[RMDB]
Chemical mapping of a 177-nucleotide RNA with DMS. For DMS, 702 sequencing reads were counted. In probing experiments dimethyl sulfate is read out at A N1 and C N3, which are open when not base-paired. Conditions: 150 mM KOAc, 10 mM MgCl2 and 150 mM bicine (pH 8.5), 24 C.
RNA sequence: GGGAACGACUCGAGUAGAGUCGAAAAAGAAGAAGGUAACGGAGAAAGGAGCGGGCCUCCCGAUCCGAGUGGUCCACGGCGUAUCAAGUUUGGAGUCAUCCGGCCGAAGGGUUGAGAUGACCCACAGGCUACGGAAAAAGUUCGCUUUUUCCGUAGCAAAAGAAACAACAACAACAAC
Reactivity to DMS in 0.01 (KOAc 150mM, MgCl2 10mM, bicine 150mM(pH8.5), 24C), signal-to-noise 1, nucleotides 027 to 126: a110g010a120a080g010a080a010g000g010u000a040a090c070g020g000a050g010a120a100a140g010g000a050g020c070g030g000g030c160c020u000c020c000c010g000a080u000c090c020g000a070g000u000g000g010u010c040c060a100c140g010g000c100g010u000a030u030c070a100a100g010u010u000u000g010g000a160g000u010c010a010u000c010c040g000g000c020c020g010a070a050g010g010g000u000u000g010a160g000a010u010g010a010c000c000c000a020c230a090g000